[RMDB]
RNA sequence: GGGAACGACUCGAGUAGAGUCGAAAAAUCUGUCAGGGACGUACGGCGUCUUCCUAUAUCAGGAACAGAUCAUGUCCAUCGUCAAGGACAUCGGACAGUUCGACUGGGAGCAGACAUCGGCAAUCCGACUGAUCCAGUUGUUCGCAACUGGAUCAGUAAAAGAAACAACAACAACAAC
Reactivity to DMS in 0.01 (KOAc 150mM, MgCl2 10mM, bicine 150mM(pH8.5), 24C), signal-to-noise 2, nucleotides 027 to 126: a040u000c050u020g020u020c090a100g030g010g010a060c130g010u010a150c090g010g000c040g010u010c020u010u000c010c000u000a050u000a070u010c130a050g000g020a010a030c040a050g000a130u000c080a040u000g010u000c000c010a140u020c210g020u000c230a130a120g010g000a010c010a020u000c150g040g000a030c070a090g020u010u000c030g020a030c090u010g000g010g000a060g000c130a020g000a080c090a040u000c040g020g000c150a070a080u000c030c010g000
Reactivity to 2A3 in 0.01 (KOAc 150mM, MgCl2 10mM, bicine 150mM(pH8.5), 24C), signal-to-noise 2, nucleotides 027 to 126: a030u100c070u080g100u060c110a100g020g040g140a000c020g020u210a040c080g060g080c000g040u040c000u010u020c000c000u120a130u090a090u240c030a000g090g010a020a030c000a020g030a080u080c060a040u060g000u020c010c000a050u100c080g270u100c100a210a100g080g000a000c000a010u040c040g000g020a000c000a030g030u020u020c000g040a050c050u030g020g000g000a040g030c070a000g050a030c000a010u050c000g000g000c000a030a060u000c020c050g010